[RMDB]
RNA sequence: GGGAACGACUCGAGUAGAGUCGAAAAACGCUGUAAUGUUAUUGCUGAUUCUAAGUCCUUCACACUUAUCUUUGGUGGCGUAGCUUACGCCUACUUUGGAUGUGAGGAAGGUACUAUGUACUUUGUGCUACCAACUAACCUUCGGGUUAGUUGGUAGAAAAGAAACAACAACAACAAC
Reactivity to 2A3 in 0.01 (KOAc 150mM, MgCl2 10mM, bicine 150mM(pH8.5), 24C), signal-to-noise 1, nucleotides 027 to 126: a040c100g040c050u080g050u160a050a110u120g180u300u090a110u160u050g070c070u040g030a200u060u160c040u120a000a090g010u050c000c030u020u010c010a010c030a030c030u200u170a030u000c020u020u000u060g010g000u010g000g000c030g000u010a030g190c080u140u020a010c010g000c010c000u120a000c000u020u000u010g030g000a000u010g000u000g010a190g040g030a010a010g000g000u000a010c020u030a010u050g050u020a030c040u060u090u060g080u100g010
Reactivity to DMS in 0.01 (KOAc 150mM, MgCl2 10mM, bicine 150mM(pH8.5), 24C), signal-to-noise 1, nucleotides 027 to 126: a060c120g020c060u000g010u010a050a100u000g010u000u000a080u010u010g000c040u000g000a160u000u000c040u020a130a040g010u000c000c000u000u000c010a050c020a030c010u000u000a050u010c000u010u000u000g020g030u000g000g010c000g030u000a020g020c300u020u000a020c000g000c000c000u000a020c010u010u000u010g000g030a010u020g020u000g000a240g000g000a000a000g010g020u030a010c020u000a090u020g020u010a100c080u000u000u000g010u000g000